[RMDB]
RNA sequence: GGGAACGACUCGAGUAGAGUCGAAAAUGGAAAGGCUAAGCACGUCGCAAUGACGUAAGGUGGGACUUUUCCCUAGGGUUUGAGCGGUCGAACCCAGGGGGAGUGUGAUCCAGGUACCGCCGUAGAAACUGGAUUACGACGUCUACCCGGGAUUCAAGAGAUGAUAAUAGUUCGCUAUUAUCAUCUCAAAAGAAACAACAACAACAAC
Reactivity to 2A3 in 0.01 (KOAc 150mM, MgCl2 10mM, bicine 150mM(pH8.5), 24C), signal-to-noise 7, nucleotides 027 to 156: u190g010g010a010a010a020g020g000c030u030a010a020g020c020a010c020g040u060c030g030c140a130a230u230g030a040c050g060u060a020a050g030g010u040g000g000g030a050c010u090u050u050u120c000c010c010u080a120g020g020g000u040u030u030g030a040g040c050g040g060u150c020g010a020a020c010c000c000a020g000g000g000g000g010a050g030u110g000u010g010a000u000c000c000a000g020g000u020a040c020c030g030c020c040g060u070a050g070a050a210a010c000u010g000g000a000u000u010a020c070g020a010c030g080u000c010u030a100c000c000c010g040g000g030a090u120u100c060a140a020
Reactivity to DMS in 0.01 (KOAc 150mM, MgCl2 10mM, bicine 150mM(pH8.5), 24C), signal-to-noise 4, nucleotides 027 to 156: u000g020g010a030a020a030g030g030c000u000a060a090g020c060a040c010g050u000c060g040c110a170a140u000g010a090c080g010u010a040a030g030g040u000g010g000g010a100c050u000u000u000u000c000c000c020u010a170g020g000g020u000u000u000g000a150g010c220g010g020u000c040g010a020a050c010c010c000a140g010g000g010g010g010a070g030u000g020u000g000a020u000c000c010a030g020g000u000a120c070c040g010c030c150g000u000a070g020a090a110a230c030u010g010g010a090u000u000a100c010g020a070c080g020u000c020u000a080c020c010c010g020g000g000a190u000u010c070a120a300

Conditions: 150 mM KOAc, 10 mM MgCl2 and 150 mM bicine (pH 8.5), 24 C.
The record gives the reactivity of an RNA of 207 nucleotides to 2A3 and DMS.
It was measured as part of the RMDB library VIROID.
2A3 adducts were read by reverse transcription with SuperScript II with manganese.